[RMDB]
RNA sequence: GGGAACGACUCGAGUAGAGUCGAAAAGCUUAGCAGUUCGCUGCUAAGCGACGUUCACGGCCCUCACCGUUGACAAAUCCCAAUGAGGACAGGUGACUGACAGAUAUUAAGCGUUCGCGCUUAAUAAUCAAAACUUGCCAUUCGUGGCAAGUUUUGAAAAAGAAACAACAACAACAAC
Reactivity to DMS in 0.01 (KOAc 150mM, MgCl2 10mM, bicine 150mM(pH8.5), 24C), signal-to-noise 1, nucleotides 027 to 126: g000c030u000u000a000g010c010a010g010u000u020c290g020c000u000g020c000u000a010a000g000c000g050a070c150g060u020u000c010a030c000g000g000c100c010c010u000c060a210c060c010g020u000u000g020a030c080a050a110a070u000c000c010c040a070a090u020g000a020g020g040a300c070a050g020g000u000g000a160c020u000g000a070c170a110g010a160u000a010u000u000a030a000g000c000g030u000u000c170g070c050g020c000u000u000a000a000u000a060a060